[RMDB]
RNA sequence: GGGAACGACUCGAGUAGAGUCGAAAAAUGUCUUUCAGGGCAUUGAAACGGCUGUUGGCCAUUAUGUUCAUGCUCGCCUGAAGGGUGGUCUUAUUUUAAAGUUUGACUCUGGCACCGUUAGCAAGACGAGAGUACUUUACUUCGGUAAAGUACUCUCAAAAGAAACAACAACAACAAC
Reactivity to 2A3 in 0.01 (KOAc 150mM, MgCl2 10mM, bicine 150mM(pH8.5), 24C), signal-to-noise 2, nucleotides 027 to 126: a000u010g000u000c010u010u110u050c030a050g030g020g020c020a020u030u050g040a020a010a010c030g000g030c020u130g100u300u130g110g020c010c060a000u100u150a150u210g020u010u000c020a000u070g000c000u020c060g080c000c010u000g040a030a030g040g020g000u000g010g000u050c030u050u090a200u050u140u060u170a150a130a040g010u030u030u040g020a020c020u010c020u010g040g000c030a000c050c000g000u110u070a010g090c030a010a050g010a030c030
Reactivity to DMS in 0.01 (KOAc 150mM, MgCl2 10mM, bicine 150mM(pH8.5), 24C), signal-to-noise 2, nucleotides 027 to 126: a040u010g000u000c010u010u010u010c150a070g020g000g010c000a050u010u020g020a050a070a100c160g000g030c010u000g010u000u000g020g000c020c040a180u010u020a060u000g010u010u010c020a020u000g000c030u000c130g000c030c020u000g000a020a030g000g020g010u010g020g000u000c030u000u000a030u000u000u040u000a070a100a120g000u000u000u020g010a050c030u000c060u010g020g010c020a100c070c020g000u000u020a070g010c070a080a080g010a070c210